Description: Structure probing data (2A3 and DMS) for a 207-nucleotide construct.

[RMDB]
RNA sequence: GGGAACGACUCGAGUAGAGUCGAAAAGCUAGUCUUCGGACUAGCAAAAAAGCGUACUACAGCCGUCGCGAGCCGAGAGUCUCCCAAAUAGGAGACUCGUUUGACGCUCGAACUACGACCAGGCUGUAUCGCAAAAACCCCUCGUUCGCGAGGGGAACAAGUGGUAUAACUUCGGUUAUACCACUUGAAAAGAAACAACAACAACAAC
Reactivity to 2A3 in 0.01 (KOAc 150mM, MgCl2 10mM, bicine 150mM(pH8.5), 24C), signal-to-noise 2, nucleotides 027 to 156: g010c000u010a010g010u000c010u050u100c210g080g000a030c010u000a020g000c000a050a020a000a000a030a000g070c070g000u110a120c000u000a000c000a000g000c000c010g000u000c010g000c010g000a020g000c030c020g120a100g000a000g040u000c030u030c060c010c040a110a280a040u300a040g020g000a000g000a000c010u010c000g000u100u040u080g040a040c050g010c020u000c000g050a120a050c120u200a020c130g020a010c020c090a020g010g000c000u030g000u000a000u020c000g000c000a030a050a000a090a090c000c000c000c000u000c000g020u020u030c210g050c010g150a000g010g000g000g000a000a000
Reactivity to DMS in 0.01 (KOAc 150mM, MgCl2 10mM, bicine 150mM(pH8.5), 24C), signal-to-noise 1, nucleotides 027 to 156: g050c000u000a000g010u000c000u000u000c270g020g020a030c000u000a000g080c010a010a040a040a120a040a050g010c000g040u000a090c070u000a020c010a030g000c020c000g030u000c030g010c020g000a040g010c010c000g020a130g030a060g010u000c000u000c000c010c010a030a170a260u040a040g000g000a050g000a010c000u000c000g010u000u000u020g010a100c180g000c030u000c020g010a070a280c010u000a100c020g000a040c020c020a240g100g010c010u000g000u010a020u000c000g000c030a020a070a060a110a090c000c000c000c010u000c010g030u000u000c230g010c000g020a010g010g040g000g000a000a020
DMS (dimethyl sulfate) methylates the pairing face of unpaired adenines and cytosines.
The reactions ran in a buffer of 150 mM KOAc, 10 mM MgCl2 and 150 mM bicine (pH 8.5), at 24 C.
Reactivities are given for positions 27 through 156.